The data come from the RNA Mapping Database (RMDB), library OK2TST. An RNA of 177 nucleotides, treated with DMS and 2A3 and read out base by base. The DMS profile rests on 858 reads. DMS adducts were read by reverse transcription with MarathonRT. The reactions ran in a buffer of 150 mM KOAc, 10 mM MgCl2 and 150 mM bicine (pH 8.5), at 24 C.
[RMDB]
RNA sequence: GGGAACGACUCGAGUAGAGUCGAAAAUUGCACAAAAGCACUUCAAGCAGACAACUGCUGAAACUGAUAAUUAGAUAGUGUGUAACUCGGGAAAGCUCGCUGCAUGGUGAGUAAUCCAUUCAGCUGCGAGUGACAUUCGUUUCGACGAAUGUCACUCAAAAGAAACAACAACAACAAC
Reactivity to DMS in 0.01 (KOAc 150mM, MgCl2 10mM, bicine 150mM(pH8.5), 24C), signal-to-noise 2, nucleotides 027 to 126: u000u000g000c030a010c010a060a100a120a030g000c050a080c130u000u000c050a120a060g030c000a000g020a200c300a130a130c020u000g000c040u030g000a040a040a120c150u000g000a060u000a110a060u000u000a170g010a100u030a020g010u000g020u000g000u010a070a030c090u010c090g000g000g050a080a020a300g000c050u000c050g040c030u000g000c100a020u010g000g030u000g020a100g000u030a060a220u000c040c010a060u000u010c080a030g000c090u010g000c230
Reactivity to 2A3 in 0.01 (KOAc 150mM, MgCl2 10mM, bicine 150mM(pH8.5), 24C), signal-to-noise 1, nucleotides 027 to 126: u040u070g060c040a000c010a000a030a060a010g020c010a010c020u000u010c090a160a110g060c020a020g020a040c010a300a180c090u010g010c000u010g000a030a040a010c040u040g040a020u070a070a060u100u040a040g050a150u090a060g130u040g000u010g000u040a030a040c030u010c070g030g000g010a010a080a110g060c010u030c050g000c000u000g080c050a110u120g010g000u050g020a150g050u120a000a030u030c000c000a070u040u060c000a050g010c010u040g000c010